[RMDB]
RNA sequence: GGGAACGACUCGAGUAGAGUCGAAAAAAGAAGAAGGUGGAACUGGGCUAAGAAUGUGCUAGCUUAGCUCUCUGCUAUGUCACAGGGUCAUUUCAGUCUUACCCAGGGAACUUCAGAGACAGACAGCGGUCAUAAUAUCAUUCGUGAUAUUAUGACCAAAAGAAACAACAACAACAAC
Reactivity to 2A3 in 0.01 (KOAc 150mM, MgCl2 10mM, bicine 150mM(pH8.5), 24C), signal-to-noise 3, nucleotides 027 to 126: a010a000g140a040a000g020a060a030g100g080u210g090g030a030a020c030u050g000g020g000c040u030a010a010g030a110a090u100g010u050g060c020u020a060g030c020u060u050a010g020c010u000c030u000c030u060g010c010u020a060u180g100u140c000a020c020a070g040g030g060u100c040a060u040u170u140c050a050g020u000c020u020u020a020c010c010c000a010g010g010g010a010a020c010u020u010c020a020g020a010g010a090c030a020g060a020c040a040g040c040
Reactivity to DMS in 0.01 (KOAc 150mM, MgCl2 10mM, bicine 150mM(pH8.5), 24C), signal-to-noise 6, nucleotides 027 to 126: a080a080g010a140a120g000a040a040g010g010u010g020g010a230a150c030u000g010g000g000c300u000a010a020g010a080a090u000g030u000g020c080u010a040g010c040u000u000a040g010c080u000c060u010c050u000g000c050u000a040u010g010u010c050a040c040a060g000g000g000u010c120a070u010u010u000c100a130g000u000c010u000u000a070c020c000c000a060g000g000g010a110a130c040u000u010c030a080g000a120g000a040c080a120g000a070c170a100g030c220

Source information: The record gives the reactivity of an RNA of 177 nucleotides to 2A3 and DMS. Source: RMDB library OK2TRN, as collected in RNAgym. Reactivities are given for positions 27 through 126.